This 207-nucleotide RNA was probed chemically with 2A3. The data come from the RNA Mapping Database (RMDB), library RNAMAK.
RNA sequence: GGGAACGACUCGAGUAGAGUCGAAAAACCUUUGUGAAGAGUCAGUAGCAGAACUACUCACUGGCAUGCCCAUUGGGCAUGUUCAGUGAGCUGCUACUUAGACCUCUUCACUCUGGUAAAACUCACGAUAUGAUCCUUCGGGAUCAUAUCGUGAGAAUCCGUGUAAACCGUUCGCGGUUUACACGGAAAAAGAAACAACAACAACAAC
Reactivity to 2A3 in 0.01 (KOAc 150mM, MgCl2 10mM, bicine 150mM(pH8.5), 24C), signal-to-noise 2, nucleotides 027 to 156: a000c000c020u000u000u000g000u010g000a010a020g000a000g000u010c010a010g000u020a000g000c030a000g010a080a050c090u200a050c000u290c000a000c000u010g000g000c000a000u010g000c010c030c090a300u170u300g000g000g000c040a000u040g000u100u110c000a000g000u000g000a000g000c000u000g000c000u000a000c000u000u000a010g000a010c000c020u010c000u030u010c000a000c000u000c000u010g020g000u050a100a130a020a010c000u000c000a000c000g010a000u000a000u010g000a000u000c020c010u010u070c300g050g000g000a000u000c000a000u000a000u000c000g000u000g000a000g000a000a000

Conditions: 150 mM KOAc, 10 mM MgCl2 and 150 mM bicine (pH 8.5), 24 C.